[RMDB]
RNA sequence: GGGAACGACUCGAGUAGAGUCGAAAAUGUGCAGGUGUGGCUUACAGAGCCACAAAAGUGAUGUUACGCACACCAUUCAAUCUACUUAACGCAUUGAAUACAUAUUCACUGCUUAUAGCGGCCGUUAUCCGUAAACGCGUUUCGACGCGUUUACGGAAAAAGAAACAACAACAACAAC
Reactivity to DMS in 0.01 (KOAc 150mM, MgCl2 10mM, bicine 150mM(pH8.5), 24C), signal-to-noise 1, nucleotides 027 to 126: u020g020u000g020c000a120g050g020u020g020u000g000g080c010u000u020a130c170a170g010a020g030c000c000a000c000a100a030a120a090g050u000g000a140u000g020u000u000a100c060g000c020a000c070a040c030c150a180u010u010c020a070a120u020c030u020a020c010u000u020a150a220c300g000c000a000u020u000g000a030a000u000a170c270a140u010a060u000u000c000a010c060u000g000c020u000u000a100u000a040g020c090g000g000c000c020g020u000u020a040
Reactivity to 2A3 in 0.01 (KOAc 150mM, MgCl2 10mM, bicine 150mM(pH8.5), 24C), signal-to-noise 1, nucleotides 027 to 126: u060g010u060g040c020a090g010g080u030g010u010g070g000c000u010u040a210c100a120g100a000g030c000c000a000c010a020a020a000a000g100u140g080a140u180g060u190u110a060c070g030c010a000c000a000c020c010a070u050u100c010a000a050u000c000u020a030c020u060u020a100a030c090g000c000a000u030u040g000a010a010u080a080c100a120u300a050u040u030c010a020c020u030g000c010u060u110a130u060a060g070c050g050g000c010c000g010u080u040a070